RNA sequence: GGGAACGACUCGAGUAGAGUCGAAAAUGAGGCCUAUCCCGGGGAUCGGUGAAUCGUCCCGGAAUGGGGACUCCGAGGGCCCCUUCCGAAGUGACGGGGGGGGGUCACUAGGAACACUGGGGUCCAGAUACCUGCACCUUCGGGUGCAGGAAAAGAAACAACAACAACAAC
Reactivity to 2A3 in 0.01 (KOAc 150mM, MgCl2 10mM, bicine 150mM(pH8.5), 24C), signal-to-noise 2, nucleotides 027 to 129: u040g000a020g000g110c000c020u020a020u030c000c000c000g000g000g010g000a200u160c070g130g050u180g090a170a080u250c030g040u060c010c000c020g010g080a010a040u070g000g000g000g090a280c000u000c000c040g000a160g000g000g000c000c000c000c000u050u000c010c000g040a110a050g040u010g040a020c010g000g000g000g000g000g000g000g000g000u000c010a000c030u000a050g060g000a010a140c160a000c010u050g000g000g000g000u000c000c000a060g000a020u110a090
Reactivity to DMS in 0.01 (KOAc 150mM, MgCl2 10mM, bicine 150mM(pH8.5), 24C), signal-to-noise 3, nucleotides 027 to 129: u060g020a100g020g000c000c030u000a030u010c040c000c000g020g000g040g000a070u110c050g090g000u040g010a120a120u040c020g040u040c000c050c000g040g070a010a050u060g000g000g000g000a110c030u050c040c110g050a250g040g000g040c070c010c000c000u040u000c000c010g050a170a210g040u000g030a000c040g000g000g000g000g000g000g000g000g000u090c060a100c000u000a290g060g000a060a050c150a000c120u020g000g010g010g020u060c000c030a110g000a210u070a060